An RNA of 207 nucleotides, treated with DMS and 2A3 and read out base by base. 2A3 is a SHAPE reagent: it acylates the 2'-hydroxyl of flexible nucleotides of all four kinds. Source: RMDB library M2RFOK, as collected in RNAgym. In probing experiments dimethyl sulfate is read out at A N1 and C N3, which are open when not base-paired. The reactions ran in a buffer of 150 mM KOAc, 10 mM MgCl2 and 150 mM bicine (pH 8.5), at 24 C. Values cover nucleotides 27 to 156.
RNA sequence: GGGAACGACUCGAGUAGAGUCGAAAAGAUUUAAACAGAUGGAGAUACACAAAUGUUUGAAUCCCAGUAACAAAAAUCCUGGUAUCUCGGGUAUACAGUAGUGCAGAUACUGUAUUUUUAAUGCACCUUAGGUUUUCCAUCUUCGGAUGGAAAACAAUCGUAUUAAACGGUUCGCCGUUUAAUACGAAAAAGAAACAACAACAACAAC
Reactivity to DMS in 0.01 (KOAc 150mM, MgCl2 10mM, bicine 150mM(pH8.5), 24C), signal-to-noise 1, nucleotides 027 to 156: g000a020u000u000u000a030a020a040c020a070g020a300u010g000g000a090g000a100u000a050c060a150c070a080a090a220u010g010u000u010u000g010a050a080u010c020c010c000a250g040u020a100a240c040a050a080a150a060a130u000c040c020u010g020g050u010a060u000c000u000c010g050g000g000u000a050u000a010c010a050g000u000a050g010u000g020c120a170g000a160u000a020c020u010g000u000a000u040u010u000u000u010a090a130u000g010c080a010c050c010u010u000a080g020g000u020u020u000u000c000c000a010u010c000u000u000c300g020g000a020u010g000g000a000a000a000a000c010a060a050
Reactivity to 2A3 in 0.01 (KOAc 150mM, MgCl2 10mM, bicine 150mM(pH8.5), 24C), signal-to-noise 2, nucleotides 027 to 156: g000a000u000u020u040a010a000a000c000a010g070a070u030g010g010a020g010a010u030a020c010a000c000a020a080a040u020g000u000u020u050g020a030a010u020c020c020c010a110g090u200a180a110c090a080a160a020a000a030u030c000c010u010g020g000u000a000u010c010u010c000g010g000g000u010a000u000a000c000a000g050u040a000g030u090g230c080a030g040a220u040a020c000u010g010u010a020u020u000u010u040u140a100a130u110g020c000a060c040c060u050u100a050g060g070u000u000u000u000c000c000a000u000c010u020u030c120g080g000a000u000g010g010a010a000a000a000c000a000a000